[RMDB]
RNA sequence: GGGAACGACUCGAGUAGAGUCGAAAAUAUGGGGAUUUAUUAUCUCACUUGGGCGGGUGAUUUAGUGACUCCAGCGCGUAUUAGUGAGAUUAUGAAUACGUUGAAAUGAUUACGCGCAAAGUAACAAGGGAUUAUUAUUCUUCGGAAUAAUAAUCCCAAAAGAAACAACAACAACAAC
Reactivity to 2A3 in 0.01 (KOAc 150mM, MgCl2 10mM, bicine 150mM(pH8.5), 24C), signal-to-noise 3, nucleotides 027 to 126: u300a120u080g020g000g000g010a020u040u050u040a090u020u140a030u060c030u010c010a000c010u020u050g050g010g080c050g050g000g000u040g100a100u120u140u180a100g040u070g080a060c020u010c100c090a050g000c000g000c000g000u010a040u040u020a050g010u030g000a020g000a010u020u010a070u040g060a090a020u110a130c110g050u040u080g010a060a050a000u080g000a040u030u040a000c010g020c010g000c020a050a070a060g100u070a070a080c130a140a070
Reactivity to DMS in 0.01 (KOAc 150mM, MgCl2 10mM, bicine 150mM(pH8.5), 24C), signal-to-noise 3, nucleotides 027 to 126: u030a050u020g000g000g020g000a070u020u020u040a060u000u010a020u000c040u000c010a040c050u020u020g000g010g010c080g000g000g000u020g000a090u000u020u030a080g000u020g020a040c010u000c070c050a100g020c010g000c000g000u020a000u000u000a100g000u010g000a160g000a030u000u040a140u020g030a100a100u040a050c270g000u020u020g000a140a090a030u020g000a040u000u010a000c010g000c000g010c000a140a020a050g000u020a100a020c170a120a090
The record gives the reactivity of an RNA of 177 nucleotides to 2A3 and DMS. The reactions ran in a buffer of 150 mM KOAc, 10 mM MgCl2 and 150 mM bicine (pH 8.5), at 24 C. It was measured as part of the RMDB library OK1LIB. For DMS, 4,633 sequencing reads were counted.